[RMDB]
An RNA of 177 nucleotides, treated with DMS and read out base by base. Reactivities are rounded to 0.1 and cut off at 0 and 3. It was measured as part of the RMDB library M2PK90. DMS adducts were read by reverse transcription with MarathonRT.

RNA sequence: GGGAACGACUCGAGUAGAGUCGAAAAGACACCCCGCAGAUCCCAAUGGCGGCUAAUAACGCCAAAAUAAAUGCGCGUAAAUGGCGUAAAAUAUAGACACAAUAUAAGUGAAAGCCGCCAAAGCAAAUAAAUCCAUACCUUUCGAGGUAUGGAUUUAAAAAGAAACAACAACAACAAC
Reactivity to DMS in 0.01 (KOAc 150mM, MgCl2 10mM, bicine 150mM(pH8.5), 24C), signal-to-noise 1, nucleotides 027 to 126: g000a150c200a090c120c050c020c080g070c070a130g000a170u020c000c000c000a180a250u000g000g000c010g010g070c010u000a060a060u000a230a030c000g010c000c020a050a020a090a140u020a030a050a110u000g030c050g030c040g000u000a030a130a150u020g000g010c020g000u000a070a030a150a060u030a170u000a090g000a300c000a020c050a140a140u000a230u000a110a080g000u000g000a090a100a030g030c000c000g000c000c000a020a080a060g010c140a010a070a080